[RMDB]
RNA sequence: GGGAACGACUCGAGUAGAGUCGAAAAGAGUAUGUAGCAGAUGGUGAAAUUAGUACAACACCACUAGUGUACAAAAAACCGAUCAUCCGUGAGGAAGGACCUCUACAGUAUAAAAAGGUAGAAGUAGCGUACCAGCAUAGUUCGCUAUGCUGGUACGAAAAGAAACAACAACAACAAC
Reactivity to 2A3 in 0.01 (KOAc 150mM, MgCl2 10mM, bicine 150mM(pH8.5), 24C), signal-to-noise 3, nucleotides 027 to 126: g030a020g000u160a030u160g020u050a010g000c050a020g080a280u020g000g030u020g100a120a080a170u200u110a100g060u120a040c060a150a000c010a040c020c040a020c010u070a100g040u100g100u110a030c000a030a060a010a040a000a000c050c040g010a050u080c010a060u000c050c030g050u050g020a030g000g060a020a050g050g040a040c000c000u000c000u030a010c000a000g180u160a110u070a200a130a060a010a020g080g040u060a010g050a060a010g020u050a010g100
Reactivity to DMS in 0.01 (KOAc 150mM, MgCl2 10mM, bicine 150mM(pH8.5), 24C), signal-to-noise 2, nucleotides 027 to 126: g000a120g020u000a050u000g000u000a100g000c030a070g030a140u020g000g010u000g010a080a110a070u000u000a100g010u000a090c210a100a200c010a040c030c020a030c060u000a080g000u020g000u000a010c050a010a040a080a050a080a120c040c010g000a030u010c060a140u000c010c040g010u000g000a160g030g000a040a090g000g000a060c030c030u000c030u000a030c040a070g000u010a200u010a050a090a050a060a110g010g010u010a020g000a040a100g030u000a050g000
Conditions: 150 mM KOAc, 10 mM MgCl2 and 150 mM bicine (pH 8.5), 24 C. This 177-nucleotide RNA was probed chemically with 2A3 and DMS. For 2A3 the reverse transcriptase was SuperScript II with manganese. For DMS, 1,465 sequencing reads were counted.